[RMDB]
RNA sequence: GGGAACGACUCGAGUAGAGUCGAAAACCAAGUAGAGCCAGAGAAGUGGGUCGAAGUGGGGCGCAAAGCAAGAACGGUCCAAGGGCUAGUUGACCUCCCUCGGCACGAGGACGUGCCUGAUUUUGAGUGGGGGAGGAUGUCACGGACAAAUUCCGUGCACCUUAGAAAUCUUCGGAUUUCUAAGGUGAAAAGAAACAACAACAACAAC
Reactivity to DMS in 0.01 (KOAc 150mM, MgCl2 10mM, bicine 150mM(pH8.5), 24C), signal-to-noise 2, nucleotides 027 to 156: c030c030a080a190g010u000a070g010a140g060c000c050a130g030a130g020a070a150g020u010g020g050g040u010c040g010a090a060g030u000g030g000g000g040c060g010c090a060a040a170g030c080a080a100g000a110a060c110g020g010u010c020c050a090a140g030g020g020c030u010a090g000u010u000g000a210c010c000u010c000c010c000u010c070g020g000c040a020c030g020a140g030g030a270c020g000u000g000c020c000u010g010a110u010u000u010u020g010a200g010u000g010g020g000g050g000a020g060g010a080u000g010u000c010a020c000g000g010a050c030a090a070a220u000u000c000c000g020u000g000
Reactivity to 2A3 in 0.01 (KOAc 150mM, MgCl2 10mM, bicine 150mM(pH8.5), 24C), signal-to-noise 4, nucleotides 027 to 156: c010c000a020a000g070u070a020g020a000g050c070c080a040g020a030g020a300a000g090u070g030g040g030u030c060g020a080a020g080u090g010g010g010g030c030g000c040a090a110a030g030c030a010a080g040a110a030c060g020g000u020c010c020a060a070g030g000g040c040u040a040g060u040u130g070a100c000c000u010c030c000c000u000c010g000g000c000a010c020g050a150g030g230a080c040g000u000g000c000c000u070g150a220u020u130u170u250g100a090g040u240g000g000g000g000g000a000g000g010a000u020g010u010c000a010c000g000g000a040c050a050a230a070u170u000c000c010g000u000g000